[RMDB]
RNA sequence: GGGAACGACUCGAGUAGAGUCGAAAAGCAUACGUUACAUUAUCUGCGUUCGUAUGCGGUAGGCAACGCAGAUAAUGUAAGCCUACCACCGUACGGUGGACAUGCGAAAGCAUGUCCAUCGUACGGAGCACCUAGUACCCUUCGGGGUACUAGGUGCAAAAGAAACAACAACAACAAC
Reactivity to 2A3 in 0.01 (KOAc 150mM, MgCl2 10mM, bicine 150mM(pH8.5), 24C), signal-to-noise 2, nucleotides 027 to 126: g040c020a070u110a160c130g100u030u020a010c010a000u010u000a010u030c010u000g000c000g020u000u040c110g050u230a100u270g070c030g030g100u170a080g040g050c000a030a000c000g000c000a000g000a000u020a010a000u000g000u010a000a000g030c000c010u080a060c000c010a040c010c000g000u000a000c000g000g000u000g010g000a000c000a000u000g010c000g030a070a000a010g000c000a000u000g000u000c000c010a000u000c000g000u000a000c010g000g000a000